Structure probing data (DMS and 2A3) for a 177-nucleotide construct. 2A3 adducts were read by reverse transcription with SuperScript II with manganese. The reactions ran in a buffer of 150 mM KOAc, 10 mM MgCl2 and 150 mM bicine (pH 8.5), at 24 C. It was measured as part of the RMDB library OK1LIB.
RNA sequence: GGGAACGACUCGAGUAGAGUCGAAAAGAAGACGUGACGAAAAGUCACGUCAAUACAGAGACUACGCAACUCUGCAAAACACAACAAAAGUGUAAAAGCGUAGCAGGAUCGAGAGAUCCUGAAAAGACGCCCUAUUUAUAUUCGUAUAAAUAGGGCGAAAAGAAACAACAACAACAAC
Reactivity to DMS in 0.01 (KOAc 150mM, MgCl2 10mM, bicine 150mM(pH8.5), 24C), signal-to-noise 6, nucleotides 027 to 126: g030a170a200g000a010c000g010u010g000a020c000g020a060a060a080a230g010u000c010a000c000g000u000c000a030a050u020a200c020a010g010a000g000a120c010u000a000c000g010c010a120a070c010u000c000u010g010c180a110a060a170a040c000a010c010a100a150c300a080a130a130a050g010u000g000u000a020a030a060a300g040c010g000u000a000g000c010a000g000g000a010u000c000g000a200g010a190g000a010u000c010c000u000g000a050a070a060a040g020a190
Reactivity to 2A3 in 0.01 (KOAc 150mM, MgCl2 10mM, bicine 150mM(pH8.5), 24C), signal-to-noise 6, nucleotides 027 to 126: g140a080a030g000a000c000g000u010g000a000c020g070a100a150a120a080g000u000c000a000c010g000u000c000a000a000u070a000c000a000g010a000g020a040c010u000a000c000g010c010a080a050c000u010c000u020g000c010a030a070a150a010c030a020c030a190a080c040a090a150a080a060g010u020g020u070a050a040a000a020g000c000g000u000a000g010c000a000g000g000a000u000c010g000a010g010a000g000a150u000c000c000u000g000a000a000a000a000g070a000